Chemical mapping of a 177-nucleotide RNA with 2A3. Values are in units of 0.01, from 0 to 300, in steps of 10. Conditions: 150 mM KOAc, 10 mM MgCl2 and 150 mM bicine (pH 8.5), 24 C. High 2A3 reactivity points to a flexible backbone, as in loops and unpaired stretches. For 2A3 the reverse transcriptase was SuperScript II with manganese.
[RMDB]
RNA sequence: GGGAACGACUCGAGUAGAGUCGAAAAAAGCCAUGUCAUGAUCAAAAACUGUGGCAGCCAAAAACCACACCCGCCCUCUUCACUCAAGAUGCAGAAUAGGGGGGACGGGGUUCGGAUCCCCUCCCCGCGCCCUGGAUGGAUUCGUCCAUCCAGGGCGAAAAGAAACAACAACAACAAC
Reactivity to 2A3 in 0.01 (KOAc 150mM, MgCl2 10mM, bicine 150mM(pH8.5), 24C), signal-to-noise 2, nucleotides 027 to 126: a000a000g050c060c030a050u100g000u150c070a030u080g090a140u010c010a020a220a150a050a000c020u050g000u000g110g000c000a030g000c090c000a000a050a080a000a000c020c000a030c020a010c050c000c000g090c030c050c000u010c000u070u000c000a090c070u010c090a000a050g070a260u200g000c030a030g000a290a000u060a090g070g000g000g000g070g020a010c070g010g000g000g010u090u100c010g060g050a080u070c000c000c000c000u050c010c030c050c000g010